The data come from the RNA Mapping Database (RMDB), library PDB130. This 207-nucleotide RNA was probed chemically with DMS and 2A3. For 2A3 the reverse transcriptase was SuperScript II with manganese. The reactions ran in a buffer of 150 mM KOAc, 10 mM MgCl2 and 150 mM bicine (pH 8.5), at 24 C. DMS adducts were read by reverse transcription with MarathonRT.
[RMDB]
RNA sequence: GGGAACGACUCGAGUAGAGUCGAAAACGCACUACAAUGUCAGUGAGAACAAGAAAAACGACUUUUGUCGAACCUACUUGAUCAAAAGAGUGGGGAAACCCCGGAAUCACAUAGACUCACUUGGGACCGAGGAUUGCAAUUAUUGGUCGCGCAACGAGUAUGAAGUAAACUUCGGUUUACUUCAUACAAAAGAAACAACAACAACAAC
Reactivity to DMS in 0.01 (KOAc 150mM, MgCl2 10mM, bicine 150mM(pH8.5), 24C), signal-to-noise 3, nucleotides 027 to 156: c080g010c030a050c010u000a090c050a090a080u000g010u000c060a060g020u010g010a060g030a120a190c050a080a160g010a040a060a040a160a110c040g010a050c030u010u000u000u010g020u000c020g010a090a100c030c010u000a030c010u000u000g020a090u000c090a110a110a150a240g000a030g030u000g000g000g020g000a090a050a140c020c000c020c010g010g000a080a090u010c040a070c040a060u000a170g000a110c030u010c040a050c040u000u000g000g010g010a150c020c010g030a060g000g020a090u000u050g010c030a040a170u010u000a090u000u010g030g020u000c060g000c080g020c060a080a060c040g000a300
Reactivity to 2A3 in 0.01 (KOAc 150mM, MgCl2 10mM, bicine 150mM(pH8.5), 24C), signal-to-noise 6, nucleotides 027 to 156: c030g030c010a020c060u120a060c100a120a160u150g050u070c030a020g020u030g040a040g030a110a060c070a150a080g130a080a070a020a020a010c020g020a020c000u150u180u190u300g020u010c010g010a040a030c000c000u020a020c010u030u040g040a090u180c060a000a030a060a060g020a000g010u030g000g010g000g000a030a040a030c030c010c000c020g050g060a040a060u070c030a030c020a090u100a040g020a050c000u010c030a040c000u050u050g050g030g020a020c030c020g010a020g040g030a080u050u110g020c020a040a030u080u030a050u080u140g020g000u020c020g010c020g000c110a050a060c040g010a020